RNA sequence: GGGAACGACUCGAGUAGAGUCGAAAAGUGCACGACUUCGGUCGUGCACAAAUAAAGGCAGUCGAGUGCGUACGGCACAGUGAUACGCUGACGCCACGACAAAAAGUAACGUCUUCGGACGUUACAAGUAACAUCGUAACUUCGGUUACGAUGUUACAAAAGAAACAACAACAACAAC
Reactivity to 2A3 in 0.01 (KOAc 150mM, MgCl2 10mM, bicine 150mM(pH8.5), 24C), signal-to-noise 5, nucleotides 027 to 126: g000u010g000c000a000c000g020a010c060u060u090c210g050g000u000c000g000u010g000c000a000c000a000a000a000u010a000a020a000g100g020c060a030g020u000c010g050a020g080u240g040c020g010u060a260c020g030g010c020a040c020a100g150u120g210a130u110a190c120g000c010u010g000a010c010g000c010c010a020c010g020a010c010a010a100a020a000a020g010u000a010a000c000g010u000c000u020u090c220g080g000a000c000g000u000u000a000c000a000a000
Reactivity to DMS in 0.01 (KOAc 150mM, MgCl2 10mM, bicine 150mM(pH8.5), 24C), signal-to-noise 4, nucleotides 027 to 126: g000u000g000c010a000c010g000a020c000u000u000c220g030g020u010c000g040u000g010c010a000c000a010a050a040u010a070a070a150g010g040c190a110g010u000c010g010a120g040u000g010c020g020u000a110c030g030g040c010a100c150a100g030u000g000a130u000a050c160g000c000u000g000a050c010g010c000c020a250c020g000a010c040a030a090a060a080a090g010u000a000a000c010g010u010c000u000u000c160g010g010a000c000g000u000u000a010c000a030a080
Source: RMDB library M2PK50, as collected in RNAgym. An RNA of 177 nucleotides, treated with 2A3 and DMS and read out base by base. For 2A3, 7,684 sequencing reads were counted. The RNA was probed in 150 mM KOAc, 10 mM MgCl2 and 150 mM bicine (pH 8.5) at 24 C. 2A3 adducts were read by reverse transcription with SuperScript II with manganese.